[RMDB]
RNA sequence: GGGAACGACUCGAGUAGAGUCGAAAAAAGAUAUGGACCCAUAGGUACAUAUGAAGAGCUUGGAUUUAGAGGCUCGGAAACGAGCCUCUUGUCAGCUCCAUAUCGGAAUGAUGGGUCCUAAGUCAAACGUAACAAAUCUGUUCGCAGAUUUGUUACGAAAAGAAACAACAACAACAAC
Reactivity to DMS in 0.01 (KOAc 150mM, MgCl2 10mM, bicine 150mM(pH8.5), 24C), signal-to-noise 2, nucleotides 027 to 126: a120a080g000a020u000a300u010g030g010a020c020c010c030a010u000a020g000g000u000a210c010a010u000a010u000g010a260a140g020a010g010c000u000u000g000g000a050u000u000u010a040g020a000g020g020c000u000c000g010g010a070a030a120c000g020a030g010c000c000u000c000u010u010g000u000c000a060g000c020u000c000c030a020u010a000u000c270g030g020a090a130u140g010a030u000g000g000g000u010c000c000u000a020a160g000u010c040a110a090a230
Reactivity to 2A3 in 0.01 (KOAc 150mM, MgCl2 10mM, bicine 150mM(pH8.5), 24C), signal-to-noise 1, nucleotides 027 to 126: a020a000g080a070u130a080u120g000g000a000c000c000c000a010u020a020g010g000u110a050c020a000u030a000u060g090a210a300g000a000g110c050u240u280g210g030a120u300u300u050a030g020a000g030g000c020u010c000g000g000a050a090a010c000g000a010g050c170c000u000c000u000u000g000u000c020a020g000c000u050c000c010a000u000a000u020c090g000g060a180a010u040g060a000u000g000g000g000u050c000c010u010a070a000g050u000c000a080a070a070

The record gives the reactivity of an RNA of 177 nucleotides to DMS and 2A3. The reactions ran in a buffer of 150 mM KOAc, 10 mM MgCl2 and 150 mM bicine (pH 8.5), at 24 C. For DMS the reverse transcriptase was MarathonRT. In probing experiments dimethyl sulfate is read out at A N1 and C N3, which are open when not base-paired.